Structure probing data (2A3) for a 207-nucleotide construct.
The RNA was probed in 150 mM KOAc, 10 mM MgCl2 and 150 mM bicine (pH 8.5) at 24 C.
Source: RMDB library OK3TST, as collected in RNAgym.

RNA sequence: GGGAACGACUCGAGUAGAGUCGAAAAGUACCGCUAUCUGAAGAAGAGGAUGCCGCAUCCUUAGCCUUACAAGACCAAGCAAAGUUUCGAGAUAUAUUAGCACAGCCACUGGAUAUGUAUGAAUUUAUUUAUAACUAUGUUUAUGGUACCGAACUACCGAAUCGCUGAGAUUCGUCUCAGCGAUUCGAAAAGAAACAACAACAACAAC
Reactivity to 2A3 in 0.01 (KOAc 150mM, MgCl2 10mM, bicine 150mM(pH8.5), 24C), signal-to-noise 2, nucleotides 027 to 156: g050u000a020c020c000g000c010u060a110u040c050u080g060a050a030g010a080a010g020a080g070g000a000u040g150c220c100g070c060a010u020c000c010u070u020a010g010c010c010u090u080a100c030a090a000g040a030c060c020a080a000g070c040a030a110a050g100u010u100u140c140g050a100g000a080u060a010u010a010u200u140a050g000c070a000c000a020g010c020c020a040c100u110g060g050a050u010a030u120g010u050a030u080g040a080a040u050u130u040a110u040u060u020a210u220a030a010c000u040a050u150g020u000u090u030a110u070g000g000u000a050c000c070g060a070a010c010u000a020c030